[RMDB]
RNA sequence: GGGAACGACUCGAGUAGAGUCGAAAAGUGGCAUACUUCGGUAUGCCACAAACCAGACCCUAUCUGGAACACGCUCUACUGCGUGAACCCAAGUAGAUCCCAAAAGUCGUGGGUUCGCCCACGACAACGACAGUGCAUGGUUCGCCAUGCACUGUCGAAAAGAAACAACAACAACAAC
Reactivity to DMS in 0.01 (KOAc 150mM, MgCl2 10mM, bicine 150mM(pH8.5), 24C), signal-to-noise 1, nucleotides 027 to 126: g070u020g000g000c000a010u000a000c240u000u010c200g010g010u010a010u000g010c000c000a000c000a000a070a170c020c020a020g000a080c160c090c020u000a220u000c030u000g000g000a190a300c040a010c020g000c030u000c220u000a000c110u020g060c000g000u000g010a020a250c170c020c070a000a060g010u000a030g010a160u000c000c010c010a080a090a220a070g000u000c000g000u000g000g000g030u000u000c300g080c000c000c000a000c010g000a000c000a000a070
Reactivity to 2A3 in 0.01 (KOAc 150mM, MgCl2 10mM, bicine 150mM(pH8.5), 24C), signal-to-noise 1, nucleotides 027 to 126: g010u000g020g010c010a000u020a010c000u040u040c190g090g000u020a000u000g010c000c000a000c000a000a000a000c000c000a020g060a010c020c000c000u060a080u090c010u020g000g010a030a030c030a010c000g020c010u070c080u180a150c120u080g050c010g000u010g070a010a040c000c010c000a010a010g000u020a020g020a100u040c010c000c000a030a100a030a030g000u000c000g010u000g030g010g020u020u000c180g030c000c000c000a010c010g010a020c000a000a010